[RMDB]
The record gives the reactivity of an RNA of 207 nucleotides to 2A3.
RNA sequence: GGGAACGACUCGAGUAGAGUCGAAAAACGAAGAACAAUAUUGAGUCGGUGACGAAAGCCAUCACUGAGCAAAUCAUCGAUCUGGAGGAGGCUCGCGAUACGUUGCGCUCUAUCGCUCCUGAGUUUAAACUCAAGGACGGUAAUAACAUCAAUAUUCCGUCAUCCGUAACUUCGGUUACGGAUGACGAAAAGAAACAACAACAACAAC
Reactivity to 2A3 in 0.01 (KOAc 150mM, MgCl2 10mM, bicine 150mM(pH8.5), 24C), signal-to-noise 1, nucleotides 027 to 156: a000c160g060a070a060g030a070a010c090a050a030u080a070u300u100g040a000g120u080c000g000g030u030g000a020c060g140a080a170a000g040c020c010a040u090c040a020c200u070g000a070g030c000a040a040a030u000c000a050u000c010g060a000u080c050u070g000g000a050g040g000a060g010g000c050u020c040g060c010g050a040u030a130c070g020u000u060g040c060g000c000u000c010u010a000u000c000g000c090u040c030c000u000g010a000g030u050u050u210a270a300a100c000u000c000a020a020g000g000a000c050g000g000u000a010a070u090a000a040c070a030u050c060a080a130u050a040u170u140c100
It was measured as part of the RMDB library OK3TST. For 2A3 the reverse transcriptase was SuperScript II with manganese. Values cover nucleotides 27 to 156. For 2A3, 491 sequencing reads were counted.